Record summary:
Chemical mapping of a 177-nucleotide RNA with 2A3 and DMS. Reactivities are given for positions 27 through 126. The 2A3 profile rests on 2,874 reads. The reactions ran in a buffer of 150 mM KOAc, 10 mM MgCl2 and 150 mM bicine (pH 8.5), at 24 C.
[RMDB]
RNA sequence: GGGAACGACUCGAGUAGAGUCGAAAAGAUAUGGAUUGCGCAGGACAUGAUGAGGGUCGGAAACGACCUAAUCAUCAACAGCCUGUCGCAAUCCUAAGUCAAACACGGAACGUUCGCGUUCCGUGAAGCUGGUACAUGUGUUCGCACAUGUACCAGCAAAAGAAACAACAACAACAAC
Reactivity to 2A3 in 0.01 (KOAc 150mM, MgCl2 10mM, bicine 150mM(pH8.5), 24C), signal-to-noise 1, nucleotides 027 to 126: g020a010u030a030u050g000g000a000u000u000g000c000g060c020a000g000g070a130c130a300u280g000a030u020g000a010g030g000g010u010c000g080g000a030a010a020c020g000a000c010c000u030a080a170u060c000a010u000c020a070a020c060a110g050c000c000u000g000u020c000g000c000a000a000u000c000c000u010a030a000g000u000c040a010a070a080c000a030c040g010g030a010a000c000g030u100u170c300g050c020g130u010u000c000c010g000u000g000a010a020
Reactivity to DMS in 0.01 (KOAc 150mM, MgCl2 10mM, bicine 150mM(pH8.5), 24C), signal-to-noise 1, nucleotides 027 to 126: g000a010u000a300u000g000g000a010u000u010g010c010g010c000a000g000g010a080c100a200u000g000a010u000g010a040g000g000g000u000c000g000g000a090a060a130c000g010a000c000c010u010a050a130u000c000a000u000c000a070a140c240a170g040c000c000u000g040u000c040g010c000a010a010u010c010c000u000a020a080g000u000c050a070a040a300c020a010c010g020g010a040a030c000g040u000u020c150g000c000g010u000u010c000c000g030u000g000a010a060